RNA sequence: GGGAACGACUCGAGUAGAGUCGAAAAUUGUGGUCAAGACCUUGGCGUAGUAUCCAAGGUUGUCAAGGUUCCUAUUGACUUAACAAUGAUUGAGUAUAUGUUAUGGUGUAAGGAUGGACAGGGGAAACUUCCGAGAACUAUUCGUAGUUCUCGGAAGAAAAGAAACAACAACAACAAC
Reactivity to 2A3 in 0.01 (KOAc 150mM, MgCl2 10mM, bicine 150mM(pH8.5), 24C), signal-to-noise 2, nucleotides 027 to 126: u030u010g000u020g030g000u050c000a040a030g010a000c010c000u000u000g010g000c040g080u140a030g070u070a120u080c020c030a000a000g010g000u020u010g000u000c000a010a030g070g020u070u070c030c000u020a130u000u070g020a000c000u120u110a100a020c020a020a130u090g010a160u050u200g030a040g100u070a060u010a060u270g120u150u000a060u130g090g020u050g030u070a050a010g080g000a050u080g000g010a010c030a050g000g000g020g080a020a040a020
Reactivity to DMS in 0.01 (KOAc 150mM, MgCl2 10mM, bicine 150mM(pH8.5), 24C), signal-to-noise 4, nucleotides 027 to 126: u000u010g020u010g010g000u000c040a040a070g010a030c000c000u000u000g010g000c220g020u000a140g030u010a140u000c050c050a030a020g010g000u000u000g020u000c100a050a060g010g000u000u000c060c070u010a130u000u000g000a020c010u000u010a070a030c030a030a050u010g010a140u000u000g010a090g000u000a030u000a060u000g010u010u000a060u000g000g020u000g010u000a070a070g000g000a080u000g000g000a060c070a070g000g010g010g020a120a070a160

Background
Structure probing data (2A3 and DMS) for a 177-nucleotide construct. For 2A3 the reverse transcriptase was SuperScript II with manganese. The DMS profile rests on 4,325 reads. Conditions: 150 mM KOAc, 10 mM MgCl2 and 150 mM bicine (pH 8.5), 24 C. Source: RMDB library M2PK90, as collected in RNAgym.